Background: An RNA of 177 nucleotides, treated with DMS and read out base by base. The RNA was probed in 150 mM KOAc, 10 mM MgCl2 and 150 mM bicine (pH 8.5) at 24 C.
RNA sequence: GGGAACGACUCGAGUAGAGUCGAAAAGAUAUGGACUAUAGGGAGCAGAGUGGCUGCGUUGAAAGUUCAGACUCGGAAACGAGUCUGAACUGGAGCAGCCCUCUGCGACGAUCUAUAGUCCUAAGUCCGUUUACAUACCGUUCGCGGUAUGUAAACGAAAAGAAACAACAACAACAAC
Reactivity to DMS in 0.01 (KOAc 150mM, MgCl2 10mM, bicine 150mM(pH8.5), 24C), signal-to-noise 1, nucleotides 027 to 126: g010a070u000a300u020g010g000a030c010u000a000u000a010g000g000g000a070g030c010a020g010a000g010u020g110g030c000u010g040c010g010u020u020g000a250a090a000g000u000u010c010a010g000a000c000u000c000g010g010a100a110a220c020g000a000g030u000c000u010g010a000a010c010u000g000g000a090g010c020a000g020c010c000c010u000c000u000g000c000g000a000c220g010a010u010c000u000a000u000a010g000u000c000c000u000a000a060g000u000c030
The DMS profile rests on 1,744 reads. It was measured as part of the RMDB library TTRINS.